[RMDB]
RNA sequence: GGGAACGACUCGAGUAGAGUCGAAAAUUCAUGAUUCUUGCCCAUGACAUGUCGGAGCGGACAGUAUUUUGAACCCAGAGCGCCAUUUUUUUGAUGUCAGACAAAAAUACGGUGGCCGCUCGCGUCCCUCCUCAUGUCGAGUCGCUCCUCCGAGGAUACUUCAGUUAGUCUUCGGACUAACUGAAGUAAAAGAAACAACAACAACAAC
Reactivity to 2A3 in 0.01 (KOAc 150mM, MgCl2 10mM, bicine 150mM(pH8.5), 24C), signal-to-noise 1, nucleotides 027 to 156: u110u070c080a090u160g030a000u030u050c020u060u130g050c010c010c000a070u100g020a020c000a010u010g000u090c110g040g000a030g020c140g010g000a000c010a030g100u040a120u030u120u300u270g120a130a100c020c070c170a100g020a020g020c010g000c000c000a000u090u170u170u000u000u000u000g100a120u120g170u200c110a050g040a260c000a010a000a000a020a020u120a070c180g060g000u020g030g080c170c110g010c010u000c000g000c000g000u000c000c000c000u010c000c000u000c010a000u000g000u020c000g000a000g000u000c000g010c010u010c000c000u000c060c060g020a010g050g020a030u030
The record gives the reactivity of an RNA of 207 nucleotides to 2A3.
Conditions: 150 mM KOAc, 10 mM MgCl2 and 150 mM bicine (pH 8.5), 24 C.
The data come from the RNA Mapping Database (RMDB), library ARCHII.
For 2A3 the reverse transcriptase was SuperScript II with manganese.